Record summary:
Chemical mapping of a 177-nucleotide RNA with DMS. It was measured as part of the RMDB library TTRDES. The reactions ran in a buffer of 150 mM KOAc, 10 mM MgCl2 and 150 mM bicine (pH 8.5), at 24 C.

RNA sequence: GGGAACGACUCGAGUAGAGUCGAAAAAAAAAGAUAUGGACCGACGUAACGGUGAUGACCGACACGUAACAUCAAUCGGAAACGAUUGUGGUGUCGCAAGCCGAAGAAGUCGGUCCUAAGUCAAAAACCUUGUAUGCAAGUUCGCUUGCAUACAAGGAAAAGAAACAACAACAACAAC
Reactivity to DMS in 0.01 (KOAc 150mM, MgCl2 10mM, bicine 150mM(pH8.5), 24C), signal-to-noise 3, nucleotides 027 to 126: a030a090a070a110a060g000a060u000a300u000g000g000a010c000c000g000a010c000g010u000a280a060c000g010g010u000g020a240u000g000a110c300c000g000a010c000a000c010g020u010a090a100c170a030u000c010a000a030u000c000g010g040a090a080a150c010g000a010u000u000g020u010g030g000u000g010u000c000g060c020a040a200g000c000c010g010a070a070g020a080a250g000u000c010g040g000u000c000c010u000a000a050g010u030c010a030a080a170a040a040